Structure probing data (DMS) for a 177-nucleotide construct.
The reactions ran in a buffer of 150 mM KOAc, 10 mM MgCl2 and 150 mM bicine (pH 8.5), at 24 C.
The DMS profile rests on 670 reads.
RNA sequence: GGGAACGACUCGAGUAGAGUCGAAAAUUCCUCAUUGAAGGAAGUUCACUACGAAUAGAAGGUCGUGUCCGAUUGAUGCCCCAAAGAUUCAGUAUAGCGUUUCAGAAAGGACAGGAAAUUUGGCCGCUAUAGGGAAAAGCUUCGGCUUUUCCCUAUAAAAAGAAACAACAACAACAAC
Reactivity to DMS in 0.01 (KOAc 150mM, MgCl2 10mM, bicine 150mM(pH8.5), 24C), signal-to-noise 1, nucleotides 027 to 126: u010u000c000c010u010c100a280u000u000g010a110a020g020g010a070a070g020u000u010c050a040c070u010a080c050g000a130a070u010a160g010a160a080g020g010u010c030g010u000g020u020c030c020g010a110u020u000g050a200u010g000c010c000c010c020a050a060a090g000a100u000u000c050a070g040u010a050u010a140g000c050g000u000u010u000c000a040g010a090a070a040g010g000a030c030a000g030g010a070a030a090u010u000u000g050g010c090c020g000c150